[RMDB]
Chemical mapping of a 207-nucleotide RNA with 2A3 and DMS. For DMS, 1,645 sequencing reads were counted. For 2A3, 1,613 sequencing reads were counted. Conditions: 150 mM KOAc, 10 mM MgCl2 and 150 mM bicine (pH 8.5), 24 C. For 2A3 the reverse transcriptase was SuperScript II with manganese.

RNA sequence: GGGAACGACUCGAGUAGAGUCGAAAAAGGCUGGUCAAACUCCGCGCCGACCUUCUUGGGCGUGGAUAAGACGAGAUCUUAAAUACGAAGGGAACACUUGUAGGAACGUACAUGGACGUGAUUUUGGACAGGGGUUCGACUCCCCUCACCUCCAGAAGAAUGGUAAGACGUUCGCGUCUUACCAUUCAAAAGAAACAACAACAACAAC
Reactivity to 2A3 in 0.01 (KOAc 150mM, MgCl2 10mM, bicine 150mM(pH8.5), 24C), signal-to-noise 3, nucleotides 027 to 156: a050g070g020c050u120g040g000u030c040a080a080a050c060u010c020c010g000c010g020c000c000g080a130c020c020u110u070c070u300u300g060g000g000c000g010u000g010g000a010u010a040a010g010a000c040g020a010g000a040u030c020u060u220a010a040a030u080a070c040g030a020a030g070g000g050a070a070c030a040c140u040u060g010u070a020g020g040a080a030c040g020u070a020c010a160u050g020g020a000c030g010u040g040a070u040u150u130u200g060g010a020c070a070g020g020g000g020u030u040c000g030a010c020u030c000c020c010c000u000c010a030c000c060u040c010c010a030g030a130a010
Reactivity to DMS in 0.01 (KOAc 150mM, MgCl2 10mM, bicine 150mM(pH8.5), 24C), signal-to-noise 1, nucleotides 027 to 156: a040g030g000c040u000g040g000u000c000a000a200a160c300u000c020c010g060c050g000c000c000g000a130c040c110u000u020c050u020u000g010g020g000c010g060u040g010g030a050u000a010a270g010a060c030g010a140g000a280u000c020u000u010a030a060a140u000a180c080g010a140a080g000g120g000a070a060c050a060c060u000u010g000u000a020g010g010a160a040c060g020u000a040c110a160u000g000g000a060c040g000u020g000a140u000u030u000u030g000g000a080c100a070g000g040g010g010u000u010c080g000a190c060u000c000c000c020c010u000c020a000c020c010u000c030c010a040g010a030a260